About this RNA:
Structure probing data (DMS and 2A3) for a 207-nucleotide construct. The RNA was probed in 150 mM KOAc, 10 mM MgCl2 and 150 mM bicine (pH 8.5) at 24 C. For 2A3 the reverse transcriptase was SuperScript II with manganese. For DMS the reverse transcriptase was MarathonRT.
RNA sequence: GGGAACGACUCGAGUAGAGUCGAAAAUCAUUAAAUUGGAAUCGGCACAAGAAAAGGCAUUACUUCAAGGUAUCCGAAGCGACUAUGUGGGUAUCUUGAAUACUGCUUUGACAGACCUCAAGGUCGCUUAUGAUAACUUCCAUGACCUGUCGAGAAGUACGUUAUACUUCUUCGGAAGUAUAACGUAAAAAGAAACAACAACAACAAC
Reactivity to DMS in 0.01 (KOAc 150mM, MgCl2 10mM, bicine 150mM(pH8.5), 24C), signal-to-noise 3, nucleotides 027 to 156: u000c060a080u010u000a030a070a160u010u000g010g000a100a080u010c060g030g050c010a120c040a080a100g010a050a070a050a040g010g020c020a010u000u000a050c170u000u000c010a040a010g010g010u000a010u000c020c030g030a110a150g030c090g060a170c130u000a110u000g020u000g010g000g000u000a010u000c020u000u010g010a030a040u000a050c140u000g010c020u010u000u000g000a130c050a140g000a110c030c030u010c140a100a180g030g010u000c030g020c050u000u000a050u000g010a080u000a020a020c070u000u000c010c020a110u000g000a110c050c020u000g020u000c020g000a140g000a110a120g010
Reactivity to 2A3 in 0.01 (KOAc 150mM, MgCl2 10mM, bicine 150mM(pH8.5), 24C), signal-to-noise 5, nucleotides 027 to 156: u060c000a010u050u230a130a100a070u100u080g060g050a060a050u050c040g030g000c040a040c040a150a090g040a080a140a020a000g020g010c000a010u030u040a020c110u000u010c000a000a000g000g000u010a000u000c010c030g070a080a050g110c080g150a130c130u150a120u290g110u280g020g010g000u000a000u000c000u000u010g000a000a000u020a000c010u000g000c000u050u020u040g040a020c050a050g080a060c020c020u090c110a110a100g010g000u010c010g000c020u100u090a070u110g060a020u020a080a100c060u060u000c020c010a030u050g050a060c010c020u020g030u070c060g010a030g010a100a010g070